Structure probing data (DMS) for a 177-nucleotide construct.
The RNA was probed in 150 mM KOAc, 10 mM MgCl2 and 150 mM bicine (pH 8.5) at 24 C.
High DMS reactivity at an A or C suggests that its Watson-Crick edge is free.
The data come from the RNA Mapping Database (RMDB), library OK1LIB.
RNA sequence: GGGAACGACUCGAGUAGAGUCGAAAAUUGAAAAGCUUCUCGAUGGCUAGAUAGUAGUCCCUGAUUUGUCCUGCCCGUUUGGUUCGCAGACACAUGACCAUACGUUUGAAAUCAUCAGAGCCCAUGAUAGUCGGAUGUGAUUCGUCACAUCCGACUAAAAAGAAACAACAACAACAAC
Reactivity to DMS in 0.01 (KOAc 150mM, MgCl2 10mM, bicine 150mM(pH8.5), 24C), signal-to-noise 1, nucleotides 027 to 126: u080u060g000a120a290a000a060g000c130u000u000c100u010c170g090a080u020g000g000c020u000a040g000a000u050a150g000u000a180g090u000c000c000c090u000g000a060u000u000u000g000u040c170c020u000g020c000c030c040g130u030u000u000g000g000u000u000c190g060c110a150g000a030c000a060c070a010u000g000a020c120c000a060u040a000c150g030u000u000u010g000a130a110a010u000c100a060u040c140a000g000a030g000c000c000c040a110u000g000a060